Conditions: 150 mM KOAc, 10 mM MgCl2 and 150 mM bicine (pH 8.5), 24 C. This 207-nucleotide RNA was probed chemically with DMS and 2A3. It was measured as part of the RMDB library OK3TST.
[RMDB]
RNA sequence: GGGAACGACUCGAGUAGAGUCGAAAAGGCGCUGUGCAAGGCUGGGCGAGCUCCCGGAAUGCCUUAGAGGGUGAGAAACGGCAACCUUAGCCUCACCUUAGCGCUGGGGCUGGACUAUACCAACUGGAACUCAUCCUGGAGAGACCACACCCAAGUAAAAUGCAUAGUAUUUCGAUACUAUGCAUUUAAAAGAAACAACAACAACAAC
Reactivity to DMS in 0.01 (KOAc 150mM, MgCl2 10mM, bicine 150mM(pH8.5), 24C), signal-to-noise 6, nucleotides 027 to 156: g020g010c030g020c040u000g020u010g020c070a080a080g030g040c010u000g010g020g030c030g010a140g030c050u010c010c010c010g020g020a120a120u000g000c020c010u000u000a130g020a110g010g020g020u000g010a070g010a080a100a150c050g010g020c050a060a090c090c030u000u000a080g010c020c000u000c010a030c020c030u000u000a140g010c040g000c090u000g020g010g010g030c010u000g010g010a090c040u000a190u010a220c020c030a080a130c060u000g010g010a080a170c030u000c020a060u000c010c020u000g010g010a140g000a120g000a120c020c020a090c050a090c040c010c000a020a130g020u000a070
Reactivity to 2A3 in 0.01 (KOAc 150mM, MgCl2 10mM, bicine 150mM(pH8.5), 24C), signal-to-noise 6, nucleotides 027 to 156: g040g000c010g010c060u040g020u060g050c050a030a030g050g000c010u030g030g030g010c060g060a080g030c040u080c000c010c010g030g060a100a070u140g000c020c000u030u010a070g040a030g060g010g000u020g010a020g050a050a180a020c060g010g000c040a040a070c010c010u100u160a010g000c010c000u000c000a010c000c000u020u120a100g030c080g000c150u010g010g000g010g000c000u020g000g030a090c070u090a060u090a230c040c030a080a050c060u050g030g050a040a010c000u010c030a020u030c020c000u000g020g010a030g000a010g020a030c000c040a030c010a010c020c010c000a020a000g020u090a060